[RMDB]
RNA sequence: GGGAACGACUCGAGUAGAGUCGAAAAUUCCUCGCCACCACACCUGCUGCAUAGAGGGCCGAGAGCACGGCGAGAAGCAGGCCACUCGCCAUGUCGAGGGCCGCAUUCUGAGCGGUGAGGGCGAAGGGGUACGUCAGCUGUUCGCAGCUGACGUACCAAAAGAAACAACAACAACAAC
Reactivity to 2A3 in 0.01 (KOAc 150mM, MgCl2 10mM, bicine 150mM(pH8.5), 24C), signal-to-noise 1, nucleotides 027 to 126: u000u000c000c000u010c030g000c020c010a200c020c030a130c000a000c090c000u120g010c010u060g070c000a130u080a090g080a050g070g010g030c000c020g150a120g000a010g110c050a040c040g010g020c010g010a010g000a030a050g030c090a050g090g010c010c000a130c000u010c000g000c030c000a060u070g000u060c010g000a100g000g080g080c010c020g030c000a000u130u000c020u000g030a010g010c000g000g000u040g010a060g000g030g010c010g000a040a030g080g050
Reactivity to DMS in 0.01 (KOAc 150mM, MgCl2 10mM, bicine 150mM(pH8.5), 24C), signal-to-noise 1, nucleotides 027 to 126: u010u000c020c000u020c020g010c000c000a090c180c070a130c050a040c010c000u010g070c010u000g000c130a070u000a090g000a150g000g010g050c000c000g000a060g020a260g030c050a050c090g010g030c010g000a000g000a070a060g020c050a060g000g020c010c100a190c000u000c000g000c010c100a070u000g000u040c000g030a200g000g030g000c000c020g010c070a030u010u000c040u000g010a060g010c020g040g000u000g000a120g020g000g000c000g000a090a130g000g000
Description: Structure probing data (2A3 and DMS) for a 177-nucleotide construct. The RNA was probed in 150 mM KOAc, 10 mM MgCl2 and 150 mM bicine (pH 8.5) at 24 C. It was measured as part of the RMDB library OK2TST.